[RMDB]
RNA sequence: GGGAACGACUCGAGUAGAGUCGAAAACAACGAAAAGAGCCAGCGGAUCAUAGGCCGAACUCUUCGUGGUACAUGGGGAUGAACUGGGAGGCCGGCGUCGGCCGUCCCUCGGCCACCUCACGGUCGAGUGAAUGAUAGUGUUCGCACUAUCAUUCACAAAAGAAACAACAACAACAAC
Reactivity to DMS in 0.01 (KOAc 150mM, MgCl2 10mM, bicine 150mM(pH8.5), 24C), signal-to-noise 4, nucleotides 027 to 126: c060a110a070c070g010a070a070a090a060g010a080g010c060c110a080g010c070g020g000a080u010c170a100u000a100g020g020c010c000g010a080a120c040u010c020u000u010c050g030u000g010g020u010a070c080a060u010g010g000g000g000a100u000g000a090a080c090u020g010g000g000a300g000g000c030c010g010g010c220g020u010c150g000g000c010c000g000u000c000c000c020u000c030g000g000c070c010a050c040c030u020c110a060c100g020g000u000c070g020a110
Reactivity to 2A3 in 0.01 (KOAc 150mM, MgCl2 10mM, bicine 150mM(pH8.5), 24C), signal-to-noise 4, nucleotides 027 to 126: c010a020a030c000g060a050a040a100a130g050a030g030c050c030a030g040c050g020g020a050u100c050a130u170a140g210g000c030c010g020a050a050c030u010c000u080u060c040g040u060g050g060u100a100c060a100u100g020g000g000g030a050u070g040a090a090c070u080g020g000g020a050g040g000c020c010g030g040c050g180u300c030g080g020c000c000g100u050c000c000c010u010c010g010g000c000c010a030c010c010u080c020a020c120g040g000u020c020g020a010

This 177-nucleotide RNA was probed chemically with DMS and 2A3. For DMS, 3,752 sequencing reads were counted. DMS (dimethyl sulfate) methylates the pairing face of unpaired adenines and cytosines. The RNA was probed in 150 mM KOAc, 10 mM MgCl2 and 150 mM bicine (pH 8.5) at 24 C.